RNA sequence: GGGAACGACUCGAGUAGAGUCGAAAACACGUUCGCGGCCAUGCGGUGGAAUGUCGUAUCAACGCCGAAGAUCCGAACACCUUCCUGCCAAGUCCGGGCAAAAUCACCCGUUUCCACGCACCUGGCACGUCAUCAAAAUGUUCGCAUUUUGAUGACGAAAAGAAACAACAACAACAAC
Reactivity to DMS in 0.01 (KOAc 150mM, MgCl2 10mM, bicine 150mM(pH8.5), 24C), signal-to-noise 3, nucleotides 027 to 126: c140a120c100g010u010u000c070g020c120g000g000c030c080a040u010g000c050g000g020u000g010g030a110a050u010g040u000c120g000u000a080u000c060a070a150c090g000c020c030g000a040a100g000a050u000c090c010g010a020a060c070a110c080c050u000u000c020c010u010g010c010c030a060a070g030u000c100c040g000g000g010c090a050a090a050a050u000c070a140c040c010c020g000u000u010u000c060c040a140c080g020c110a070c060c030u000g010g000c080a110
Reactivity to 2A3 in 0.01 (KOAc 150mM, MgCl2 10mM, bicine 150mM(pH8.5), 24C), signal-to-noise 3, nucleotides 027 to 126: c050a010c050g020u040u020c040g010c020g060g020c020c030a070u120g040c040g000g060u040g040g160a200a100u170g060u100c030g030u060a040u140c060a150a120c070g010c020c010g020a070a020g040a050u070c040c020g030a040a010c010a020c030c010u020u020c000c000u020g000c030c010a050a040g010u000c040c030g000g000g040c070a130a060a000a100u110c040a070c000c010c000g020u020u040u020c030c030a070c020g000c010a040c020c000u010g000g010c030a020